[RMDB]
RNA sequence: GGGAACGACUCGAGUAGAGUCGAAAACUUGUCGCCUGGUACGUCGGUAAUCAGACAGGUACCCUCGGCCUCGUGACACCAUAUGACAUCCACCGUGUCGUCAAGUCACCCCGCGACUCGGUUGCGAUGGUAACAUGCCUUUCGAGGCAUGUUACCAAAAAGAAACAACAACAACAAC
Reactivity to 2A3 in 0.01 (KOAc 150mM, MgCl2 10mM, bicine 150mM(pH8.5), 24C), signal-to-noise 1, nucleotides 027 to 126: c040u070u100g020u020c030g010c030c020u000g040g030u080a240c030g020u010c000g020g000u040a120a110u080c020a040g260a300c070a120g050g100u030a000c000c000c010u010c000g000g010c000c020u040c040g030u000g000a020c050a060c010c070a160u110a100u260g130a120c030a090u040c000c000a020c000c000g000u030g000u010c040g020u040c050a050a080g090u080c050a150c000c000c010c000g000c000g020a010c010u000c070g010g010u040u060g040c070g060a020
Reactivity to DMS in 0.01 (KOAc 150mM, MgCl2 10mM, bicine 150mM(pH8.5), 24C), signal-to-noise 2, nucleotides 027 to 126: c120u040u000g060u000c000g020c000c020u000g000g000u000a040c020g010u000c220g010g000u000a020a090u000c060a130g000a150c300a130g000g020u010a050c030c000c020u000c010g010g000c000c000u000c210g020u000g000a000c020a080c180c140a120u000a050u000g000a190c080a020u010c020c020a040c010c000g040u000g020u000c000g000u000c110a030a040g000u000c080a120c020c050c010c140g000c010g000a030c000u000c040g010g010u000u000g010c170g000a020